An RNA of 177 nucleotides, treated with DMS and 2A3 and read out base by base.
Source: RMDB library OK2TST, as collected in RNAgym.
Conditions: 150 mM KOAc, 10 mM MgCl2 and 150 mM bicine (pH 8.5), 24 C.
Reactivities are given for positions 27 through 126.
For 2A3, 3,504 sequencing reads were counted.
RNA sequence: GGGAACGACUCGAGUAGAGUCGAAAAAAACGCGGACCAGCGCAUAACGGAGGACGUGGAGAAGUUCUGUUUCGCGGUGGCGGACCUAUACUCGUACACCUUCAAGCCGCUGCUGGACGUGCUGCUGCAGCGCUAGUACUUUCGAGUACUAGCGCUGAAAAGAAACAACAACAACAAC
Reactivity to DMS in 0.01 (KOAc 150mM, MgCl2 10mM, bicine 150mM(pH8.5), 24C), signal-to-noise 3, nucleotides 027 to 126: a030a050a080c040g000c010g000g000a120c020c000a020g040c030g020c050a090u000a170a170c130g000g000a060g020g000a080c200g020u010g000g000a060g020a120a050g000u000u010c100u010g010u000u000u010c050g000c050g010g020u010g030g010c010g000g000a020c030c000u010a080u000a090c000u010c030g010u030a080c030a130c020c010u010u000c060a050a110g020c220c100g010c010u010g030c030u000g010g000a230c020g000u000g000c030u000g000c120u000g010
Reactivity to 2A3 in 0.01 (KOAc 150mM, MgCl2 10mM, bicine 150mM(pH8.5), 24C), signal-to-noise 3, nucleotides 027 to 126: a000a000a000c030g010c020g000g030a300c010c010a000g010c000g000c010a050u040a140a000c040g010g010a010g020g030a070c090g030u080g050g030a140g030a090a030g000u050u000c030u020g070u010u080u110c070g020c040g100g080u050g150g000c010g000g010a010c000c000u040a050u060a140c010u000c020g080u070a000c010a050c050c040u000u030c030a070a010g050c030c040g020c110u160g000c010u000g000g000a000c000g000u000g020c030u080g000c030u070g060